[RMDB]
RNA sequence: GGGAACGACUCGAGUAGAGUCGAAAAGGUCCAGAUGCUGGGGGGCCAUCAGCAGGAUUCCGGCGUGCAACGCCCCGUCGAAUAUGCGCAUGUUGGUGGUGGACGCGGUGUUGGCGCCCGCGUCGGGCACAUUAUUGUCAUUCGUGACAAUAAUGUGAAAAGAAACAACAACAACAAC
Reactivity to 2A3 in 0.01 (KOAc 150mM, MgCl2 10mM, bicine 150mM(pH8.5), 24C), signal-to-noise 9, nucleotides 027 to 126: g060g000u030c010c010a040g050a120u090g020c060u060g000g010g000g010g060g020c020c000a050u040c010a010g050c010a010g050g040a040u120u030c040c010g010g000c020g010u080g060c020a060a050c030g030c000c010c020c000g020u030c010g020a100a040u140a100u240g060c080g000c080a070u110g040u070u070g080g030u030g020g030u050g050g010a010c000g000c000g010g000u030g000u030u040g020g010c020g030c010c010c000g000c000g010u020c000g000g020g000
Reactivity to DMS in 0.01 (KOAc 150mM, MgCl2 10mM, bicine 150mM(pH8.5), 24C), signal-to-noise 8, nucleotides 027 to 126: g010g020u020c000c020a090g000a080u010g000c030u020g000g010g000g000g000g010c020c020a030u020c040a050g000c040a060g000g010a090u010u020c040c050g010g000c030g010u010g000c080a080a120c120g000c030c010c060c030g010u020c040g010a100a060u020a090u020g010c050g000c070a120u010g010u000u000g000g010u010g010g020u010g000g010a030c020g010c180g000g000u010g010u000u010g010g010c060g000c070c010c010g010c020g030u010c010g000g010g010